[RMDB]
Description
Chemical mapping of a 177-nucleotide RNA with DMS and 2A3. It was measured as part of the RMDB library OK1LIB. The RNA was probed in 150 mM KOAc, 10 mM MgCl2 and 150 mM bicine (pH 8.5) at 24 C. DMS adducts were read by reverse transcription with MarathonRT. For 2A3 the reverse transcriptase was SuperScript II with manganese.

RNA sequence: GGGAACGACUCGAGUAGAGUCGAAAACUAUUUAUAGACAGAACAGUGGAAAACGUAUAUCGCUAUAAACCUUACACACCGAAUCUUCCAGUCGUACGAUUCCACAUAGGCGAGGCAUAAGCGAAAGCCAUGGCCUGAGUUUCGACUCAGGCCAUGGAAAAGAAACAACAACAACAAC
Reactivity to DMS in 0.01 (KOAc 150mM, MgCl2 10mM, bicine 150mM(pH8.5), 24C), signal-to-noise 1, nucleotides 027 to 126: c040u070a040u020u000u030a000u030a100g030a050c030a090g010a130a090c060a130g010u020g000g020a060a070a000a110c020g030u000a120u030a130u000c050g020c020u000a030u050a050a040a040c040c020u010u000a170c080a050c130a120c000c030g130a010a100u020c020u000u050c000c080a080g010u000c030g070u040a060c040g010a100u000u000c000c010a120c020a140u040a050g000g000c000g050a010g010g010c000a070u040a070a000g000c010g040a200a080a130g000
Reactivity to 2A3 in 0.01 (KOAc 150mM, MgCl2 10mM, bicine 150mM(pH8.5), 24C), signal-to-noise 2, nucleotides 027 to 126: c000u000a090u000u150u050a180u060a000g080a010c040a080g070a300a000c080a050g060u040g000g000a000a090a000a000c010g000u010a050u000a010u190c010g060c100u010a000u020a180a090a020c030c000u030u150a070c060a000c020a010c030c070g080a040a120u030c020u160u080c040c000a020g020u000c010g000u020a050c030g000a000u040u000c000c000a000c000a000u080a050g020g000c010g000a000g000g010c000a020u020a090a040g030c070g000a020a000a000g070